[RMDB]
RNA sequence: GGGAACGACUCGAGUAGAGUCGAAAAGAUAUGGAGAAAUCCUGCCGAUCAUCGAUCUUCAUUCGGAAACGAAUGAAGGGAGAUCGACAGGAGUUUCUCCUAAGUCAAACCAUAGUUCGCUAUGGAAUCUAGGUGUAUACUUCGGUAUACACCUAGAAAAAGAAACAACAACAACAAC
Reactivity to 2A3 in 0.01 (KOAc 150mM, MgCl2 10mM, bicine 150mM(pH8.5), 24C), signal-to-noise 2, nucleotides 027 to 126: g010a020u110a030u180g000g000a010g020a010a030a010u000c000c000u010g000c020c000g010a010u010c020a090u300c040g100a110u040c000u000u000c010a010u030u010c000g000g080a120a060a060c000g000a000a000u010g010a000a000g000g010g000a020g000a000u000c000g000a010c000a020g020g010a030g000u020u040u000c000u000c000c000u000a070a010g000u040c050a120a060a120c020c000a010u000a000g040u100u080c300g010c130u020a000u010g040g060a100a130
Reactivity to DMS in 0.01 (KOAc 150mM, MgCl2 10mM, bicine 150mM(pH8.5), 24C), signal-to-noise 3, nucleotides 027 to 126: g000a030u010a300u010g000g010a010g000a020a020a060u000c010c000u000g000c000c020g000a020u000c030a300u010c270g010a060u000c010u010u000c000a000u000u010c000g000g000a160a080a180c000g000a010a000u000g000a020a000g020g000g000a020g010a000u000c000g010a010c010a000g020g000a010g020u010u000u000c000u000c000c010u000a020a070g010u000c030a130a170a260c000c000a000u000a010g000u000u010c300g020c010u010a000u000g010g000a100a130